[RMDB]
About this RNA:
This 177-nucleotide RNA was probed chemically with 2A3 and DMS. For 2A3, 2,934 sequencing reads were counted. The RNA was probed in 150 mM KOAc, 10 mM MgCl2 and 150 mM bicine (pH 8.5) at 24 C. 2A3 adducts were read by reverse transcription with SuperScript II with manganese. For DMS the reverse transcriptase was MarathonRT.
RNA sequence: GGGAACGACUCGAGUAGAGUCGAAAAGACGUAGGGAACGUCGAUGUAGUCGACGGCCUCGCGAACGGCCUGGCCCUUCCCGUCGCCAGACUGGACGAGGACGGUCGCACCGUGCUCGCGGGCGAUCGGCUGGCACUAAUUUCGAUUAGUGCCAGCCAAAAGAAACAACAACAACAAC
Reactivity to 2A3 in 0.01 (KOAc 150mM, MgCl2 10mM, bicine 150mM(pH8.5), 24C), signal-to-noise 2, nucleotides 027 to 126: g070a000c030g050u090a090g000g030g030a160a180c010g010u010c010g010a040u060g260u300a140g130u020c010g000a010c000g040g050c000c010u040c030g020c020g020a090a020c020g030g000c030c030u030g030g000c000c000c000u020u010c020c000c010g010u010c020g000c020c010a060g010a110c080u090g030g040a040c000g020a040g010g040a020c000g000g000u040c030g000c100a220c040c010g010u020g090c040u040c070g020c000g000g000g000c000g010a030u070c040
Reactivity to DMS in 0.01 (KOAc 150mM, MgCl2 10mM, bicine 150mM(pH8.5), 24C), signal-to-noise 3, nucleotides 027 to 126: g010a110c030g030u000a090g010g020g000a070a110c010g030u000c000g000a020u000g010u000a150g000u000c020g010a030c010g000g020c020c010u000c040g020c030g010a120a060c060g010g010c040c010u010g020g000c000c050c060u000u010c010c010c020g000u000c140g000c040c040a080g000a120c070u010g010g010a210c040g000a040g000g020a130c170g000g000u010c110g010c100a300c000c000g020u000g010c140u010c100g000c020g000g000g020c010g010a040u000c020